The record gives the reactivity of an RNA of 207 nucleotides to 2A3 and DMS. The 2A3 profile rests on 693 reads. Conditions: 150 mM KOAc, 10 mM MgCl2 and 150 mM bicine (pH 8.5), 24 C.
[RMDB]
RNA sequence: GGGAACGACUCGAGUAGAGUCGAAAAGGUCAGGCCUGAUCGGAAACAGCAGCAGGUGACUCCGCCUUAUGUGAAGGAUCGGCUGAAACACGAGGAAAUACUGAGCCAACGCAAGACGGUAGCCGAAAAAAUCUAGUUCACUUCGGUGAACUAGAAACAAAGGGAUCUACUUCGGUAGAUCCCUUUGAAAAGAAACAACAACAACAAC
Reactivity to 2A3 in 0.01 (KOAc 150mM, MgCl2 10mM, bicine 150mM(pH8.5), 24C), signal-to-noise 1, nucleotides 027 to 156: g060g010u060c020a020g000g180c010c030u140g030a110u110c000g000g160a210a030a100c030a010g080c020a020g010c030a000g010g010u040g080a150c060u050c070c070g000c000c010u200u140a090u050g040u070g070a080a040g010g040a030u020c030g000g000c060u080g060a020a050a010c090a020c030g040a050g010g060a070a060a080u140a130c040u040g010a030g030c020c040a050a050c060g000c060a040a000g030a010c030g010g050u060a050g080c040c020g010a150a010a000a030a000a000u040c000u000a000g000u000u000c000a000c000u010u070c250g090g000u020g000a000a000c000u000a000g000a000a000a000
Reactivity to DMS in 0.01 (KOAc 150mM, MgCl2 10mM, bicine 150mM(pH8.5), 24C), signal-to-noise 1, nucleotides 027 to 156: g000g070u000c030a160g020g030c000c030u010g020a050u010c030g020g000a080a090a170c000a180g000c050a020g020c040a030g000g030u000g010a050c120u000c010c000g010c030c060u000u010a050u010g010u000g000a110a100g000g010a070u000c060g020g080c030u020g000a090a120a130c090a060c030g020a080g020g000a120a070a140u000a060c040u010g040a070g020c000c010a040a120c060g000c000a070a090g010a030c050g000g040u000a040g030c000c020g010a000a050a130a070a080a100u010c000u000a020g010u010u010c000a000c000u000u000c300g040g050u000g000a020a020c030u000a010g000a000a040a140